[RMDB]
RNA sequence: GGGAACGACUCGAGUAGAGUCGAAAAGGAGCCUCGCUGCUCUGGGCGGAAGAGUCUUCUGACUUUUCUAGCCUAUUCAGCAUUGCGCUCUUGAGGCCCGGCGAAACGCGGUUCGUCUGCUGAGGAUGCCUCCGCUAGUCGAGCGGACUUGGUCUCUUCCAUAUUCCAAGUUCGCUUGGAAUAUGGAAAAAGAAACAACAACAACAAC
Reactivity to DMS in 0.01 (KOAc 150mM, MgCl2 10mM, bicine 150mM(pH8.5), 24C), signal-to-noise 2, nucleotides 027 to 156: g020g030a020g020c000c020u000c180g030c030u000g020c040u000c040u000g000g000g010c000g010g000a020a010g000a010g000u000c000u010u010c300u000g010a030c000u000u000u000u000c010u000a100g020c000c000u000a020u010u010c020a050g010c010a220u000u000g010c170g020c000u000c030u010u000g000a150g020g010c000c010c030g090g000c020g010a140a070a050c110g020c050g010g030u000u000c020g000u000c010u000g010c190u000g000a300g010g010a100u010g000c170c040u000c010c030g000c020u000a230g070u010c040g000a070g010c010g040g010a060c060u000u000g010g000u000c010u000c070u010
Reactivity to 2A3 in 0.01 (KOAc 150mM, MgCl2 10mM, bicine 150mM(pH8.5), 24C), signal-to-noise 3, nucleotides 027 to 156: g030g000a010g000c000c030u070c090g000c000u000g000c000u000c000u000g000g010g000c020g020g010a010a000g010a000g000u000c000u220u170c260u300g050a040c010u010u010u010u020c000u010a160g000c000c000u000a010u040u150c000a000g000c000a010u020u250g030c140g000c010u000c000u010u040g010a020g000g010c000c030c000g010g010c040g070a150a080a030c210g030c080g140g030u060u050c010g030u030c050u060g010c030u050g010a040g060g060a180u170g060c020c000u030c010c000g000c020u050a040g070u110c030g040a020g000c030g010g030a080c020u050u070g030g020u010c020u000c000u040